[RMDB]
RNA sequence: GGGAACGACUCGAGUAGAGUCGAAAACGGCACGGUCCACGACGCGUAACGCGGCCUCCCUAGCGACGCGGAGCGCCUCCAAAGCGUCCUCGAAGGUUUCCACCUCCACCACGGUACCCAUCGGGCCACCACCAAUUCAGUUCGCUGAAUUGGUGGUAAAAGAAACAACAACAACAAC
Reactivity to DMS in 0.01 (KOAc 150mM, MgCl2 10mM, bicine 150mM(pH8.5), 24C), signal-to-noise 3, nucleotides 027 to 126: c070g030g000c060a100c060g000g000u000c030c070a130c110g000a040c070g020c020g010u020a080a210c210g000c110g020g000c050c020u010c020c020c010u000a120g040c080g010a090c070g020c110g000g000a190g000c220g010c020c000u000c040c070a010a120a190g000c000g000u000c020c010u000c050g030a060a130g000g010u000u010u000c080c060a120c040c020u010c010c020a090c050c060a080c070g010g010u000a080c000c020c020a090u010c150g010g010g010c040c050
Reactivity to 2A3 in 0.01 (KOAc 150mM, MgCl2 10mM, bicine 150mM(pH8.5), 24C), signal-to-noise 2, nucleotides 027 to 126: c030g040g000c040a020c090g040g030u070c010c020a020c060g020a010c000g050c020g040u070a120a000c040g030c060g040g000c000c000u040c000c000c000u060a060g030c060g130a080c090g030c050g060g030a020g000c100g020c000c000u000c050c000a050a070a000g000c000g010u020c000c020u040c040g110a120a070g040g010u030u060u050c040c030a030c010c010u080c020c010a040c030c020a030c050g010g000u060a150c000c000c010a040u090c040g040g000g000c020c000

The record gives the reactivity of an RNA of 177 nucleotides to DMS and 2A3. 2A3 adducts were read by reverse transcription with SuperScript II with manganese. The DMS profile rests on 1,886 reads. For DMS the reverse transcriptase was MarathonRT. It was measured as part of the RMDB library OK2TST.